[RMDB]
RNA sequence: GGGAACGACUCGAGUAGAGUCGAAAACGCAAGGGUCGGCAUAGUAACUCCGUUUCAGCUGCAAUCCAUACUUGCGCCGGUGACGUCUACCGCGAUCUUCCUUGGAGUCACCAUCGACAUUAGCGGAAGUAAUGAGCUGGUUCGCCAGCUCAUUACUAAAAGAAACAACAACAACAAC
Reactivity to DMS in 0.01 (KOAc 150mM, MgCl2 10mM, bicine 150mM(pH8.5), 24C), signal-to-noise 2, nucleotides 027 to 126: c070g000c030a050a050g000g000g020u000c110g030g030c110a040u000a080g020u010a020a030c020u030c070c170g000u000u000u010c080a120g020c030u000g010c060a100a050u010c060c040a080u010a160c070u010u000g010c050g020c070c050g000g030u000g000a020c020g010u020c030u000a070c010c030g010c080g000a120u000c070u000u000c030c020u000u010g020g000a080g000u000c030a030c060c050a040u010c120g010a080c100a050u000u000a070g020c060g000g030a190
Reactivity to 2A3 in 0.01 (KOAc 150mM, MgCl2 10mM, bicine 150mM(pH8.5), 24C), signal-to-noise 2, nucleotides 027 to 126: c010g000c010a030a030g000g000g050u100c010g030g000c040a060u050a090g040u070a040a030c020u040c140c080g020u000u030u070c060a030g030c010u040g000c000a030a060u050c070c000a060u080a150c050u020u020g020c030g000c020c020g050g030u050g020a010c020g180u010c060u130a070c010c000g040c000g090a100u000c020u010u020c000c000u010u090g050g010a030g000u020c020a040c070c010a050u080c040g080a050c080a200u120u120a020g050c030g030g020a030